[RMDB]
RNA sequence: GGGAACGACUCGAGUAGAGUCGAAAAUAGAUUAUUGCAAUUAUUAAUCUUGAACGAGGAAUGCCUAGUAAGCAUGAUUCAUCAGAUUGUGCUGACUACGUCCCUGCCCUUUGUACACACCGCCCGUCGCUCCUACCGAUUGAAAGAUAUGAUGAAUUACUGUAAGAGGGUUCGCCCUCUUACAGUAAAAAGAAACAACAACAACAAC
Reactivity to DMS in 0.01 (KOAc 150mM, MgCl2 10mM, bicine 150mM(pH8.5), 24C), signal-to-noise 1, nucleotides 027 to 156: u000a060g000a070u000u000a020u000u000g020c020a140a110u010u000a030u000u000a020a030u000c020u000u010g020a060a130c060g020a040g020g020a100a040u010g000c030c020u010a110g010u000a050a060g000c020a040u010g010a110u000u000c040a170u010c290a140g000a050u010u000g020u000g000c010u000g000a040c030u000a040c050g030u000c000c000c030u000g010c010c010c000u020u010u000g020u010a060c070a030c040a080c000c000g000c000c010c030g000u000c020g000c010u000c000c000u010a080c070c020g000a080u000u010g030a050a070a090g010a080u000a100u000g000a090u010g020a110a130u000
Reactivity to 2A3 in 0.01 (KOAc 150mM, MgCl2 10mM, bicine 150mM(pH8.5), 24C), signal-to-noise 2, nucleotides 027 to 156: u080a010g040a020u030u030a010u080u160g020c010a050a110u040u020a060u140u090a210a010u050c000u000u100g050a060a020c040g000a100g030g010a100a060u100g040c010c010u020a010g010u100a030a000g000c000a010u010g010a040u060u120c070a110u040c040a140g000a100u000u000g010u000g030c010u010g020a040c000u040a020c030g050u080c020c020c000u010g050c010c010c010u010u030u080g150u140a030c030a000c000a030c010c030g040c000c020c020g080u020c010g010c020u030c010c010u030a070c010c000g070a060u030u070g070a070a030a000g070a070u100a060u210g010a040u050g010a050a070u000